[RMDB]
RNA sequence: GGGAACGACUCGAGUAGAGUCGAAAAGGCAGCGAAUUCGUUCGCUGCCAAUACAGGACGUGGAGCCGCCUUCACGGCGCACGUCGAUGACGCCCGGGCCGGAGAAUCCAGAUUUCGAUCUGGAUAAUAUACAGAAUGACUUCGGUCAUUCUGUAUAAAAAGAAACAACAACAACAAC
Reactivity to DMS in 0.01 (KOAc 150mM, MgCl2 10mM, bicine 150mM(pH8.5), 24C), signal-to-noise 3, nucleotides 027 to 126: g010g000c010a010g000c000g010a010a020u000u010c190g010u000u000c000g010c000u010g030c000c000a010a020u000a080c130a090g000g010a020c000g010u000g010g030a200g040c020c010g010c060c130u010u000c170a110c020g000g010c010g010c010a010c010g010u000c000g000a060u000g010a140c130g010c020c010c020g020g010g010c030c030g000g010a130g010a190a070u000c000c000a000g000a030u000u000u010c170g000a020u000c000u000g000g000a000u010a030a080
Reactivity to 2A3 in 0.01 (KOAc 150mM, MgCl2 10mM, bicine 150mM(pH8.5), 24C), signal-to-noise 2, nucleotides 027 to 126: g000g000c000a020g020c040g010a010a030u080u090c140g040u090u010c000g020c010u010g000c020c010a000a000u010a010c000a020g140g030a000c000g020u010g040g110a040g010c020c010g010c060c120u180u140c100a060c020g000g000c000g000c000a010c010g000u010c000g030a120u070g040a010c040g040c040c010c020g020g000g000c050c030g100g030a030g080a120a040u000c000c000a010g010a020u080u100u120c140g080a030u040c020u000g000g030a010u010a000a010